[RMDB]
RNA sequence: GGGAACGACUCGAGUAGAGUCGAAAAUACUUUUAUAUCUGAUUUCCAAGCAGCAAGAGGGGAAGAACAGAAAACAACCCGUCAUGGGUGUGCAUCAAAAGAGUGUCCCUAUACUUCUCAGUAGCUCUAUAUACCCUGGGUUCGCCCAGGGUAUAUAAAAAGAAACAACAACAACAAC
Reactivity to DMS in 0.01 (KOAc 150mM, MgCl2 10mM, bicine 150mM(pH8.5), 24C), signal-to-noise 1, nucleotides 027 to 126: u020a120c020u000u000u000u000a140u000a070u030c000u010g000a070u000u000u000c020c040a140a150g010c090a080g010c070a080a150g020a040g010g000g010g020a010a100g000a090a090c100a050g010a090a110a120a060c050a070a040c000c000c030g010u000c180a070u030g000g010g000u000g010u020g020c070a040u010c180a060a060a040a120g020a000g010u010g000u000c020c030c010u010a190u000a020c050u000u000c050u020c050a120g020u000a120g010c060u000c060